[RMDB]
RNA sequence: GGGAACGACUCGAGUAGAGUCGAAAAAAGAAGCUCGUGGCGUGAGCCUGAGUGAAACGGCCUUUAGUGCAGAUCUUGGUGGUAGUAGCAAAUAUUCAAAUGCGAACUUUGAAGACUGAAGUGGAGAUGACUUACCUCUUUUCGAAGAGGUAAGUCAAAAAGAAACAACAACAACAAC
Reactivity to 2A3 in 0.01 (KOAc 150mM, MgCl2 10mM, bicine 150mM(pH8.5), 24C), signal-to-noise 2, nucleotides 027 to 126: a000a010g200a020a010g020c020u020c090g180u070g010g010c020g050u140g020a020g020c000c000u000g020a030g030u080g020a060a070a010c030g040g020c010c000u120u150u110a110g050u070g060c050a040g020a100u010c010u110u020g030g000u000g000g010u000a100g000u000a010g030c030a000a000a090u150a080u080u080c010a040a020a010u180g020c010g020a030a000c010u040u020u110g030a050a010g030a060c030u010g080a060a000g030u110g050g060a120g020a090
Reactivity to DMS in 0.01 (KOAc 150mM, MgCl2 10mM, bicine 150mM(pH8.5), 24C), signal-to-noise 4, nucleotides 027 to 126: a060a090g010a170a260g010c020u000c020g020u000g000g010c010g020u030g000a130g010c020c020u000g010a040g020u010g010a040a050a120c170g000g030c040c030u030u000u010a050g020u040g030c030a050g000a070u020c020u020u010g000g020u000g000g010u000a070g000u020a110g000c060a080a080a100u010a090u010u000c060a020a030a070u010g000c100g000a060a050c080u000u000u010g010a030a030g010a080c100u010g000a050a100g020u010g000g010a110g000a160